[RMDB]
RNA sequence: GGGAACGACUCGAGUAGAGUCGAAAACGUGAAAUCCUGGAACAGGCCCAGCAUGUCAUCCGAAACCAGAACCUGCCCGUCGCAGGCGGAUGAAGCGCCGAUACCGACGGUCGGAAUAUCGAUCAAACCCUGCUAUGAUAUUCGUAUCAUAGCAGGGAAAAGAAACAACAACAACAAC
Reactivity to 2A3 in 0.01 (KOAc 150mM, MgCl2 10mM, bicine 150mM(pH8.5), 24C), signal-to-noise 4, nucleotides 027 to 126: c040g060u060g080a090a000a080u030c000c010u020g000g050a070a080c040a070g090g000c020c030c030a000g030c020a050u100g020u070c020a040u000c020c030g050a140a030a040c050c010a060g010a060a040c000c000u010g020c010c000c010g100u060c030g000c020a040g030g030c010g000g010a030u070g070a020a030g060c020g020c020c010g020a040u060a080c020c020g020a030c010g020g000u040c010g000g050a110a070u150a070u150c050g020a010u080c040a050a040a150
Reactivity to DMS in 0.01 (KOAc 150mM, MgCl2 10mM, bicine 150mM(pH8.5), 24C), signal-to-noise 5, nucleotides 027 to 126: c120g010u010g000a100a120a080u000c040c000u000g010g020a080a100c100a070g010g000c050c050c040a080g010c060a080u010g010u000c020a010u000c040c000g010a130a080a110c120c090a070g010a110a300c090c010u010g000c080c010c040g010u010c030g020c040a060g000g010c010g000g020a050u010g010a100a110g010c090g020c040c000g000a080u010a050c240c010g000a040c030g000g010u000c070g000g010a130a090u010a070u000c030g010a050u010c110a080a100a140